Structure probing data (DMS and 2A3) for a 177-nucleotide construct. The DMS profile rests on 68,973 reads. The data come from the RNA Mapping Database (RMDB), library OK2TRN. DMS adducts were read by reverse transcription with MarathonRT.

[RMDB]
RNA sequence: GGGAACGACUCGAGUAGAGUCGAAAACGGGCCAGUCCAAGGGCUUCGGUUUCGUGCGCUUCGGCUCUUACGAUGCCCAGAUGCGCGUGCUCACCAAUCGCCAUCUGAUCGACGGUCGCUGGUGCGACCAUGUGCUGUCAUUCGUGACAGCACAUGGAAAAGAAACAACAACAACAAC
Reactivity to DMS in 0.01 (KOAc 150mM, MgCl2 10mM, bicine 150mM(pH8.5), 24C), signal-to-noise 9, nucleotides 027 to 126: c050g000g000g010c010c020a080g010u000c060c100a130a130g030g010g010c020u000u010c120g020g010u000u000u010c040g010u000g010c130g020c110u000u000c050g010g000c010u000c020u000u000a130c080g010a060u010g010c050c050c030a060g000a020u000g010c160g020c020g010u000g010c100u000c140a100c120c090a120a110u010c040g010c010c000a020u000c020u000g000a100u000c090g010a110c150g010g010u000c020g010c040u000g010g010u000g010c060g010a090
Reactivity to 2A3 in 0.01 (KOAc 150mM, MgCl2 10mM, bicine 150mM(pH8.5), 24C), signal-to-noise 9, nucleotides 027 to 126: c010g010g030g000c020c010a020g040u040c040c040a130a140g130g020g000c000u210u180c100g030g010u040u070u230c050g020u050g030c090g010c080u020u040c030g030g000c010u000c010u050u060a060c060g040a050u110g030c010c030c010a020g010a020u080g020c100g000c020g040u040g020c040u080c060a130c040c040a050a100u090c020g000c020c000a030u010c030u040g050a120u100c060g080a060c080g030g020u030c030g000c060u120g070g070u160g030c010g020a040